Structure probing data (2A3 and DMS) for a 177-nucleotide construct.
As a SHAPE reagent, 2A3 marks flexible, mostly unpaired nucleotides at the ribose 2'-OH.
DMS (dimethyl sulfate) methylates the pairing face of unpaired adenines and cytosines.
For DMS the reverse transcriptase was MarathonRT.
RNA sequence: GGGAACGACUCGAGUAGAGUCGAAAACCGAGUUCGAGCUCGGCGUCGGCAGCCACCGGAACGCCCGAGUGAACCAGCGCAUCGGCAUAGGCCGCCAGCUGUAGCAGCGCGGUCACGGUUGGCGAGCGCACAUGGUCCAUUUCGAUGGACCAUGUGCAAAAGAAACAACAACAACAAC
Reactivity to 2A3 in 0.01 (KOAc 150mM, MgCl2 10mM, bicine 150mM(pH8.5), 24C), signal-to-noise 2, nucleotides 027 to 126: c010c000g010a030g000u090u140c100g040a080g080c050u010c040g000g000c020g040u070c020g050g020c040a080g030c030c020a010c010c020g050g020a100a020c030g010c000c010c030g030a040g020u070g030a010a040c060c020a050g000c050g000c040a150u090c040g100g010c060a130u120a260g120g000c020c010g020c030c020a030g010c010u070g060u200a030g050c080a000g000c050g020c000g040g000u050c050a040c100g120g010u110u130g030g020c010g000a030g030c050
Reactivity to DMS in 0.01 (KOAc 150mM, MgCl2 10mM, bicine 150mM(pH8.5), 24C), signal-to-noise 3, nucleotides 027 to 126: c010c030g000a060g000u000u010c060g030a190g020c020u010c010g010g000c020g030u000c040g020g010c030a130g010c150c100a090c000c010g010g010a120a050c060g010c150c020c030g020a040g040u000g000a100a080c130c030a140g000c050g000c060a100u000c030g000g010c040a110u010a050g020g010c010c010g000c050c080a110g010c000u010g010u010a180g020c040a090g040c120g020c020g030g010u000c030a060c090g010g000u000u000g020g010c010g000a130g010c100